[RMDB]
RNA sequence: GGGAACGACUCGAGUAGAGUCGAAAAGCAACGACGAUGACGAUCCCGAGUAUAUCGAUUCAUUCCUCCGCGACGUUGUCGCACCGGGGGACGUCCCGACGAUGUACCGACUUGUCGCACACACGCUGUAUCGGGAGUACAUCGAAUCGAAGGCGGCGAGAGUAAGACAAUUCGUUGUCUUACUCUCAAAAGAAACAACAACAACAAC
Reactivity to 2A3 in 0.01 (KOAc 150mM, MgCl2 10mM, bicine 150mM(pH8.5), 24C), signal-to-noise 8, nucleotides 027 to 156: g040c030a030a080c030g070a010c020g030a030u050g020a020c040g050a090u050c030c010c010g020a050g030u090a100u020a020u080c070g070a100u110u150c060a060u130u060c010c010u020c010c010g040c020g020a040c210g150u120u250g010u070c010g010c030a070c070c080g000g000g000g000g010a000c030g060u030c010c020c020g010a010c010g000a010u020g000u010a010c000c020g060a060c100u080u110g070u150c050g010c020a020c010a010c000a020c100g080c100u060g030u090a060u090c010g010g020g000a010g010u010a020c000a010u000c010g000a080a050u030c010g020a070a030g050g000c010g030g020c050
Reactivity to DMS in 0.01 (KOAc 150mM, MgCl2 10mM, bicine 150mM(pH8.5), 24C), signal-to-noise 3, nucleotides 027 to 156: g010c060a070a130c010g020a040c040g010a050u010g030a110c070g010a160u000c040c010c030g000a120g000u010a070u000a070u010c010g010a130u000u010c050a170u000u000c020c020u000c040c030g010c020g050a160c020g020u010u000g020u000c020g020c010a060c090c040g000g020g010g050g010a030c170g020u010c020c030c050g020a110c020g000a040u000g020u000a040c040c000g000a090c070u000u010g030u000c050g000c040a150c110a120c070a070c110g030c060u010g020u010a070u000c030g010g000g020a110g030u000a050c040a030u000c000g000a040a090u000c050g010a080a160g000g000c030g010g010c120
Description:
Source: RMDB library OK3TST, as collected in RNAgym. The record gives the reactivity of an RNA of 207 nucleotides to 2A3 and DMS. 2A3 adducts were read by reverse transcription with SuperScript II with manganese. For 2A3, 8,251 sequencing reads were counted.